[RMDB]
Source information
Chemical mapping of a 177-nucleotide RNA with 2A3 and DMS. The RNA was probed in 150 mM KOAc, 10 mM MgCl2 and 150 mM bicine (pH 8.5) at 24 C. Source: RMDB library TTRDES, as collected in RNAgym. In probing experiments dimethyl sulfate is read out at A N1 and C N3, which are open when not base-paired. The 2A3 profile rests on 26,411 reads. Reactivities are rounded to 0.1 and cut off at 0 and 3. 2A3 adducts were read by reverse transcription with SuperScript II with manganese.
RNA sequence: GGGAACGACUCGAGUAGAGUCGAAAAGAUAUGGAGCAUGAUACCUUCGAUAAGUCCACACUCGGAAACGAGUGCCGGACUUUUGACGAAGGUCAUGCUCCUAAGUCAAAGUGGUCUUCGGACCACACCCUUUAGUUUUGUUCGCAAAACUAAAGGGAAAAGAAACAACAACAACAAC
Reactivity to 2A3 in 0.01 (KOAc 150mM, MgCl2 10mM, bicine 150mM(pH8.5), 24C), signal-to-noise 6, nucleotides 027 to 126: g030a010u080a030u190g000g000a010g000c010a000u010g050a060u160a200c010c010u010u020c020g060a080u030a170a010g000u000c010c000a010c010a000c010u000c000g010g050a080a080a060c020g010a010g000u020g020c070c040g000g010a000c000u030u000u010u030g100a060c020g000a000a000g010g000u010c000a000u000g000c000u010c000c000u010a010a000g000u010c030a040a040a080g000u010g020g010u010c020u050u130c300g130g000a010c000c000a000c000a010
Reactivity to DMS in 0.01 (KOAc 150mM, MgCl2 10mM, bicine 150mM(pH8.5), 24C), signal-to-noise 7, nucleotides 027 to 126: g020a050u000a300u000g010g010a010g010c000a010u000g000a130u000a050c020c010u000u000c000g020a200u000a020a010g010u000c000c010a300c010a000c000u000c000g000g000a110a100a180c010g000a010g010u000g010c150c140g030g010a000c010u010u000u000u000g010a190c180g000a010a000g010g000u000c010a000u000g010c000u000c000c000u000a000a060g000u000c040a110a090a100g010u000g000g000u000c000u000u020c210g030g010a020c000c000a010c020a070